Overview: The record gives the reactivity of an RNA of 207 nucleotides to DMS and 2A3. 2A3 is a SHAPE reagent: it acylates the 2'-hydroxyl of flexible nucleotides of all four kinds. For 2A3, 1,350 sequencing reads were counted. 2A3 adducts were read by reverse transcription with SuperScript II with manganese.
RNA sequence: GGGAACGACUCGAGUAGAGUCGAAAAUUCUCAGCACUCAUCAAGAAGUAGGCUUAGGCCAAUUGCUUGGUGGUGAAAGUAGAGGGAAGGUAGCACUUCAACGCCUCUAAGUACGCUGUGGGAGUAGAAAACUGGACAUCGUUCGCGAUGUCCAGAACAGGAAGACAAUGUUCGCAUUGUCUUCCUGAAAAGAAACAACAACAACAAC
Reactivity to DMS in 0.01 (KOAc 150mM, MgCl2 10mM, bicine 150mM(pH8.5), 24C), signal-to-noise 1, nucleotides 027 to 156: u010u010c000u000c000a150g020c000a070c040u020c000a020u000c000a060a020g040a010a060g050u010a090g020g030c010u000u000a100g100g000c000c010a030a090u010u000g030c000u000u000g040g020u020g010g010u000g000a030a080a090g010u000a020g000a110g100g050g000a130a030g040g020u000a210g000c120a300c020u000u000c050a090a110c030g000c020c000u000c030u000a050a050g030u000a040c050g000c010u010g050u000g000g010g000a120g000u000a100g000a090a100a130a130c010u030g000g000a060c000a020u000c000g040u000u010c300g040c000g030a010u010g000u000c000c010a000g000a000a080
Reactivity to 2A3 in 0.01 (KOAc 150mM, MgCl2 10mM, bicine 150mM(pH8.5), 24C), signal-to-noise 2, nucleotides 027 to 156: u020u000c020u000c010a030g030c010a010c050u230c010a010u010c020a050a000g010a080a010g050u090a020g050g040c000u100u110a100g170g000c020c010a050a140u070u080g030c010u010u020g000g000u000g010g000u030g020a080a020a000g040u040a000g000a000g030g030g000a000a030g040g000u050a010g040c030a030c100u010u020c040a060a050c080g080c020c010u000c010u000a000a020g060u040a040c050g010c040u060g020u080g040g030g080a060g020u170a020g180a080a060a020a040c010u000g000g000a000c000a000u000c000g040u080u050c150g040c000g080a000u000g010u000c010c000a000g000a000a010